[RMDB]
RNA sequence: GGGAACGACUCGAGUAGAGUCGAAAAGAUAUGGAGCGAACUACAUUGUAUCAUUCGGAAACGAAUGGAUACAAGAUGCGCUCCUAAGUCAAAACCGCAUAGGGCUCGUUCGCGAGCCCUAUGCGGACUGGUAUGCUAUGUUCGCAUAGCAUACCAGAAAAGAAACAACAACAACAAC
Reactivity to DMS in 0.01 (KOAc 150mM, MgCl2 10mM, bicine 150mM(pH8.5), 24C), signal-to-noise 2, nucleotides 027 to 126: g010a020u000a300u000g010g000a020g010c000g000a160a160c090u000a160c130a270u010u000g010u020a000u000c000a050u010u000c000g000g000a090a100a180c010g000a010a010u000g030g010a000u000a000c000a000a020g000a300u000g030c010g010c000u010c000c000u000a020a070g020u000c010a080a070a160a150c010c010g000c010a000u000a010g020g000g010c000u000c000g000u000u020c250g040c000g000a040g000c000c000c000u010a000u000g010c000g000g020a010
Reactivity to 2A3 in 0.01 (KOAc 150mM, MgCl2 10mM, bicine 150mM(pH8.5), 24C), signal-to-noise 1, nucleotides 027 to 126: g010a020u010a030u190g020g000a000g030c050g070a130a030c090u300a100c270a300u000u040g000u010a030u000c020a000u010u000c000g010g000a060a050a040c010g000a000a000u100g240g150a000u010a020c000a000a000g050a040u120g040c030g050c000u000c020c000u000a100a000g070u030c050a010a020a060a070c030c000g200c000a030u000a000g000g000g020c010u030c050g090u060u170c300g040c060g100a010g090c040c040c020u000a010u000g000c000g040g000a000
An RNA of 177 nucleotides, treated with DMS and 2A3 and read out base by base. For 2A3, 1,764 sequencing reads were counted. Source: RMDB library TTRDES, as collected in RNAgym. For DMS the reverse transcriptase was MarathonRT. For DMS, 1,832 sequencing reads were counted. The RNA was probed in 150 mM KOAc, 10 mM MgCl2 and 150 mM bicine (pH 8.5) at 24 C.